The record gives the reactivity of an RNA of 207 nucleotides to 2A3 and DMS.

[RMDB]
RNA sequence: GGGAACGACUCGAGUAGAGUCGAAAAAGACCACCUCUACGGAGGUGGUCAAGUCACGUAGCUAGUACCAGGUUGCAAUACUAGAGCGUUAGUCCUGGCGCGUACGGUGGCAGUACGCUGCCACCGAUAAAACUUGAAUACUUCGGUAUUCAAGUAACCAUAGAAUAGUCUUCGGACUAUUCUAUGGAAAAGAAACAACAACAACAAC
Reactivity to 2A3 in 0.01 (KOAc 150mM, MgCl2 10mM, bicine 150mM(pH8.5), 24C), signal-to-noise 3, nucleotides 027 to 156: a000g000a010c000c000a000c020c010u020c010u030a050c280g100g010a000g010g000u000g000g000u000c000a000a010g020u020c000a000c010g000u020a020g070c000u010a010g000u050a150c010c000a000g000g010u010u010g000c010a010a010u000a020c020u010a010g010a000g010c100g100u120u180a000g010u100c000c000u010g030g000c050g040c030g080u170a070c020g000g000u000g000g000c010a000g000u040a020c280g010c060u000g000c010c010a000c000c010g000a000u020a010a050a000a010c000u000u010g000a010a000u010a010c010u010u090c180g060g000u000a000u000u000c000a010a000g000u000a010a040
Reactivity to DMS in 0.01 (KOAc 150mM, MgCl2 10mM, bicine 150mM(pH8.5), 24C), signal-to-noise 2, nucleotides 027 to 156: a110g010a060c000c000a050c020c000u020c000u010a130c300g070g010a020g040g050u000g000g000u000c000a020a050g000u000c100a100c070g010u010a170g020c010u000a050g010u000a050c030c010a070g010g020u010u000g020c040a070a050u000a020c010u000a040g010a240g010c030g030u010u010a060g000u000c010c020u020g010g040c220g030c070g000u010a020c020g030g020u010g040g030c070a070g010u000a080c230g060c020u000g030c000c000a010c000c010g000a020u000a020a030a100a080c000u000u000g000a010a020u000a000c000u000u020c300g050g020u010a000u000u000c000a000a040g030u000a030a080